[RMDB]
RNA sequence: GGGAACGACUCGAGUAGAGUCGAAAAUACUUAGUACGCGCGUAGUUGCAGGCAUUCCGGGUGCAGCAACUGCCGCGGAAGACUUUUCCCAGAGUGUGCGCUUCAACUGGCGUGCUGAGUAGUGCACGAAUUGCACGUACGUUCGCGUACGUGCAAAACCUUCAACAGUUUUCGAACUGUUGAAGGUAAAAGAAACAACAACAACAAC
Reactivity to 2A3 in 0.01 (KOAc 150mM, MgCl2 10mM, bicine 150mM(pH8.5), 24C), signal-to-noise 3, nucleotides 027 to 156: u090a000c020u040u040a010g010u020a000c000g030c000g010c030g010u020a000g000u010u010g000c040a130g100g000c010a020u110u080c120c190g280g000g010u010g000c010a010g000c000a000a010c010u010g020c020c040g020c000g000g000a000a010g080a050c030u130u110u040u040c000c000c010a000g010a010g020u120g000u000g020c030g040c010u070u070c060a270a290c100u040g010g030c030g030u050g010c020u010g000a020g030u080a000g030u030g000c030a020c050g050a090a130u040u020g000c010a000c000g020u000a000c000g010u020u040c070g000c020g090u000a000c010g010u000g030c010a010a010a000
Reactivity to DMS in 0.01 (KOAc 150mM, MgCl2 10mM, bicine 150mM(pH8.5), 24C), signal-to-noise 2, nucleotides 027 to 156: u000a060c070u020u000a050g010u000a080c020g030c010g040c140g050u000a040g010u010u010g040c010a150g030g020c010a060u000u010c010c300g000g050g120u000g030c000a300g000c020a030a020c030u000g000c000c060g000c020g000g000a100a080g010a090c070u000u000u010u000c000c010c010a180g000a120g020u000g030u010g030c040g030c010u000u000c040a090a100c090u020g020g030c030g040u010g020c000u000g000a100g010u000a070g040u000g000c010a050c050g010a100a170u000u000g000c000a030c000g000u010a010c000g020u000u010c300g010c050g040u000a010c000g000u000g000c030a000a010a030